[RMDB]
RNA sequence: GGGAACGACUCGAGUAGAGUCGAAAACAGAUGCUGAUGAAGAUAAUAAUGAAGUAGCUACAGCUCAACUUACCUGCCAACCCCAUGCCAGUCGACCUAAUUAGUACAACCUAAAUCCAUUAUAAAACUUCCUUUUGGAUUUCGAUCCAAAAGGAAGAAAAGAAACAACAACAACAAC
Reactivity to 2A3 in 0.01 (KOAc 150mM, MgCl2 10mM, bicine 150mM(pH8.5), 24C), signal-to-noise 7, nucleotides 027 to 126: c020a010g110a100u110g030c020u040g000a080u110g070a080a110g060a120u120a220a040u120a070a070u240g110a100a030g030u090a020g020c010u100a050c030a020g000c000u000c020a010a050c030u050u130a100c010c020u040g010c030c010a030a030c020c010c000c010a020u050g030c030c010a020g020u050c020g030a020c000c000u040a080a120u020u060a030g030u050a040c030a050a030c020c000u040a050a050a040u060c040c020a060u090u110a080u180a130a030a030a040
Reactivity to DMS in 0.01 (KOAc 150mM, MgCl2 10mM, bicine 150mM(pH8.5), 24C), signal-to-noise 3, nucleotides 027 to 126: c140a060g010a080u010g010c010u010g000a140u020g000a090a070g000a080u020a080a110u000a170a090u010g010a070a060g030u030a070g010c030u010a110c060a080g030c030u000c010a040a080c040u000u000a040c030c050u000g000c030c110a060a070c090c000c030c040a050u000g000c040c020a000g030u020c040g010a070c030c020u020a030a060u000u000a050g000u000a080c140a060a110c080c030u010a030a060a070u050c050c040a080u000u030a100u050a060a080a110a070